[RMDB]
The data come from the RNA Mapping Database (RMDB), library RNAMAK. Chemical mapping of a 207-nucleotide RNA with 2A3 and DMS. DMS (dimethyl sulfate) methylates the pairing face of unpaired adenines and cytosines. As a SHAPE reagent, 2A3 marks flexible, mostly unpaired nucleotides at the ribose 2'-OH. DMS adducts were read by reverse transcription with MarathonRT. Conditions: 150 mM KOAc, 10 mM MgCl2 and 150 mM bicine (pH 8.5), 24 C.
RNA sequence: GGGAACGACUCGAGUAGAGUCGAAAACUGGGAUUGUUCGCAAUCCCAGAAAAAGCGUACUACAUCAACAAGACCCAGCAUCGAUCGGAUCCCAAAUAGGAUCCGGGAGCUGCUUGUAUUGAUGUAUCGCAAAAACCGUGUUGUUCGCAACACGGAACCGAAUUAUAAGCUUCGGCUUAUAAUUCGGAAAAGAAACAACAACAACAAC
Reactivity to 2A3 in 0.01 (KOAc 150mM, MgCl2 10mM, bicine 150mM(pH8.5), 24C), signal-to-noise 4, nucleotides 027 to 156: c000u000g010g000g000a000u020u000g010u060u080c090g000c080a000a000u000c000c000c000a000g000a000a010a000a000a000g040c040g020u060a100c070u000a000c020a000u000c010a010a010c010a010a040g080a200c060c140c020a010g000c000a200u210c030g170a090u050c000g010g000a000u010c010c010c030a150a300a090u290a100g000g000a000u010c000c000g010g010g000a000g000c000u020g010c000u010u000g020u050a170u010u060g000a000u000g010u020a040u300c050g000c070a060a080a010a000a010c000c000g010u010g000u000u000g030u030u070c240g000c170a000a000c000a000c010g000g000a000a020
Reactivity to DMS in 0.01 (KOAc 150mM, MgCl2 10mM, bicine 150mM(pH8.5), 24C), signal-to-noise 1, nucleotides 027 to 156: c000u010g000g020g000a040u000u020g010u000u010c300g000c040a030a010u020c020c010c000a030g010a010a060a070a130a110g010c000g050u000a020c100u010a020c020a010u000c000a020a020c020a060a130g000a150c090c120c040a040g030c030a210u010c140g010a130u000c000g000g010a010u000c020c000c000a030a120a220u010a070g020g020a010u010c000c000g010g000g000a120g040c050u010g000c040u000u010g020u000a050u010u000g010a020u010g010u010a020u000c050g000c040a050a080a060a160a080c000c000g000u000g000u000u000g000u000u010c240g010c000a040a030c020a010c000g000g010a040a020